This 177-nucleotide RNA was probed chemically with 2A3 and DMS. For DMS the reverse transcriptase was MarathonRT. The DMS profile rests on 7,560 reads.
RNA sequence: GGGAACGACUCGAGUAGAGUCGAAAACAAGCAUAAGCUGAUCAACAUCUGGGAUAAGCAAUUGGGCUCCAAUCAACAAACUUGAUAAGUUAUCUGAUGUCUGAUAAUACAUUGUGAUUGAAAGUUCCCUAUGUACACUGUUCGCAGUGUACAUAGGAAAAGAAACAACAACAACAAC
Reactivity to 2A3 in 0.01 (KOAc 150mM, MgCl2 10mM, bicine 150mM(pH8.5), 24C), signal-to-noise 6, nucleotides 027 to 126: c020a010a020g050c010a050u060a170a010g010c050u040g070a040u040c010a010a070c000a060u030c030u100g080g000g030a040u020a080a020g030c030a020a150u090u070g030g020g000c010u000c050c010a020a080u070c010a000a090c030a070a090a050c040u040u060g030a040u100a150a100g050u030u040a020u010c020u040g020a050u060g110u080c080u040g050a050u050a140a030u110a070c060a060u050u050g040u030g050a070u030u080g040a110a080a020g040u030u030c000
Reactivity to DMS in 0.01 (KOAc 150mM, MgCl2 10mM, bicine 150mM(pH8.5), 24C), signal-to-noise 6, nucleotides 027 to 126: c050a060a040g000c020a040u000a050a070g010c100u000g000a060u010c040a060a040c060a040u000c030u010g020g010g000a040u000a040a060g010c070a060a070u000u000g010g010g010c030u000c100c080a060a060u010c100a060a080c120a070a060a090c100u000u010g010a060u010a070a090g010u000u000a030u000c020u000g000a050u000g010u010c140u000g000a030u000a050a090u000a100c100a120u000u000g010u000g000a050u000u000g010a060a070a110g010u010u000c030